[RMDB]
RNA sequence: GGGAACGACUCGAGUAGAGUCGAAAAUGGAAGAUAUUCAGUACCUAUCAAUCUGGUAGUGGUGCAAACACUAGUUGUAAGGCCCACGAAGGAUGCCCAGAAGGUACCCGCAGGUAACAAGAGACACCGGCUCAACAUUAUUCGUAAUGUUGAGCCGAAAAGAAACAACAACAACAAC
Reactivity to DMS in 0.01 (KOAc 150mM, MgCl2 10mM, bicine 150mM(pH8.5), 24C), signal-to-noise 3, nucleotides 027 to 126: u030g000g000a110a120g010a100u030a070u000u000c130a140g000u000a020c000c030u000a150u020c090a100a030u000c000u000g000g000u040a080g000u030g000g000u010g010c020a040a080a010c010a000c030u020a150g020u020u000g020u020a040a100g000g000c000c000c000a010c000g010a190a260g020g000a000u000g010c080c050c050a160g010a140a020g000g000u020a000c030c130c030g010c120a040g000g000u020a080a080c070a030a080g010a120g010a090c260a050c150
Reactivity to 2A3 in 0.01 (KOAc 150mM, MgCl2 10mM, bicine 150mM(pH8.5), 24C), signal-to-noise 3, nucleotides 027 to 126: u100g040g060a040a060g030a130u080a110u120u200c020a040g020u010a020c010c000u080a120u120c060a100a000u000c010u030g010g000u010a060g010u030g010g080u300g030c000a020a180a000c020a020c040u100a130g070u170u030g010u030a140a060g140g010c000c000c000a010c000g010a000a000g010g020a010u000g060c000c020c000a020g030a080a010g030g000u010a020c000c000c050g100c030a050g000g030u030a110a000c010a080a050g030a000g060a100c020a030c040
This 177-nucleotide RNA was probed chemically with DMS and 2A3. The data come from the RNA Mapping Database (RMDB), libraries RFM100 and RFMREP. For DMS the reverse transcriptase was MarathonRT. For 2A3 the reverse transcriptase was SuperScript II with manganese. Conditions: 150 mM KOAc, 10 mM MgCl2 and 150 mM bicine (pH 8.5), 24 C.